[RMDB]
RNA sequence: GGGAACGACUCGAGUAGAGUCGAAAAAGCUCCAUACUACGGUAUGGAGCAGACAGAGAAGCCAGGUCACGUCUCUGCAGUUACACAGCUCACGAGUGCCUGCUGGGGUGGAACCUGGUCUGUCUAAACAAGUAUCAAAAUUCGUUUUGAUACUUGUAAAAGAAACAACAACAACAAC
Reactivity to DMS in 0.01 (KOAc 150mM, MgCl2 10mM, bicine 150mM(pH8.5), 24C), signal-to-noise 9, nucleotides 027 to 126: a080g010c000u000c000c000a010u000a010c000u000a090c210g030g000u000a000u000g000g000a010g010c000a000g000a010c010a010g000a300g010a160a270g000c010c000a000g010g000u000c260a180c020g000u000c000u000c000u010g000c010a010g000u000u020a140c010a030c020a110g010c110u020c190a080c200g010a080g020u000g000c180c000u000g000c000u000g000g000g010g000u000g000g000a130a040c010c000u000g000g010u000c000u000g000u000c000u000a080a120
Reactivity to 2A3 in 0.01 (KOAc 150mM, MgCl2 10mM, bicine 150mM(pH8.5), 24C), signal-to-noise 9, nucleotides 027 to 126: a000g000c000u010c000c000a010u000a000c010u010a020c210g110g000u000a000u000g010g000a000g000c000a000g000a000c000a000g020a000g060a180a010g030c010c000a010g010g000u030c080a020c140g040u000c010u000c000u020g010c000a000g000u110u180a020c030a000c010a050g110c050u140c110a090c120g150a080g050u010g010c000c000u000g000c000u020g000g000g000g010u020g010g020a020a020c000c000u000g000g000u020c000u000g000u000c000u010a020a030

An RNA of 177 nucleotides, treated with DMS and 2A3 and read out base by base. The data come from the RNA Mapping Database (RMDB), libraries RFM100 and RFMREP. Conditions: 150 mM KOAc, 10 mM MgCl2 and 150 mM bicine (pH 8.5), 24 C.